Structure probing data (DMS) for a 177-nucleotide construct. It was measured as part of the RMDB library 15KREP. The reactions ran in a buffer of 150 mM KOAc, 10 mM MgCl2 and 150 mM bicine (pH 8.5), at 24 C. For DMS, 570 sequencing reads were counted.
[RMDB]
RNA sequence: GGGAACGACUCGAGUAGAGUCGAAAAAGCACUAGCCCAGACCCCAAAUUUGUUGAUAAAUACUAUGCUUUUCUUAAUAAGCACUUUUCUAUGAUGAUACUGUCUGAUGACGGUGUCGUUUGCUAUACCUAGCAGAAAGGUUCGCCUUUCUGCUAGGAAAAGAAACAACAACAACAAC
Reactivity to DMS in 0.01 (KOAc 150mM, MgCl2 10mM, bicine 150mM(pH8.5), 24C), signal-to-noise 1, nucleotides 027 to 126: a020g000c060a050c160u010a070g010c000c020c040a130g000a300c060c010c000c070a040a140a110u000u000u010g020u030u000g000a070u000a060a120a040u020a110c110u000a090u000g000c000u000u000u000u010c190u020u000a080a040u000a070a040g020c000a130c220u000u000u010u000c090u000a110u010g000a060u000g020a040u000a000c000u000g010u000c050u000g040a180u010g040a020c000g010g000u000g000u000c010g080u000u010u000g020c110u000a060u000a170